[RMDB]
RNA sequence: GGGAACGACUCGAGUAGAGUCGAAAAAGUGAAAGAAUUUGCAUAGCUGGGCAAACCAGGCUCUUUUUGAAGUCUCUAGUUCUGAACUAUGCUCCGUCUUCAUAUAGCCAGACUCUCUAGGACCAAAUGAAACCACUAUAUUCGUAUAGUGGUUUCAAAAAGAAACAACAACAACAAC
Reactivity to DMS in 0.01 (KOAc 150mM, MgCl2 10mM, bicine 150mM(pH8.5), 24C), signal-to-noise 4, nucleotides 027 to 126: a090g010u000g010a070a060a090g000a070a080u000u010u000g010c030a040u000a050g000c030u010g000g000g020c080a030a050a110c120c300a060g010g000c040u000c000u000u010u010u000u000g020a090a100g010u000c020u010c050u000a110g000u010u000c030u010g010a060a090c030u000a040u000g000c030u000c110c110g000u000c020u010u000c030a030u010a080u000a090g010c060c030a100g000a110c070u000c030u000c030u000a100g010g000a110c020c060a060a080a120
Reactivity to 2A3 in 0.01 (KOAc 150mM, MgCl2 10mM, bicine 150mM(pH8.5), 24C), signal-to-noise 1, nucleotides 027 to 126: a010g020u030g070a150a080a080g040a040a200u080u080u080g000c000a010u020a030g030c010u080g000g110g000c040a090a000a060c030c010a000g000g020c000u030c020u060u300u090u140u280g050a040a010g000u000c020u000c000u060a040g090u090u060c030u050g050a090a060c000u020a030u060g020c010u010c020c010g040u000c040u030u000c030a000u050a000u010a090g000c060c000a010g030a050c020u040c000u060c040u030a040g070g040a060c000c080a000a080a100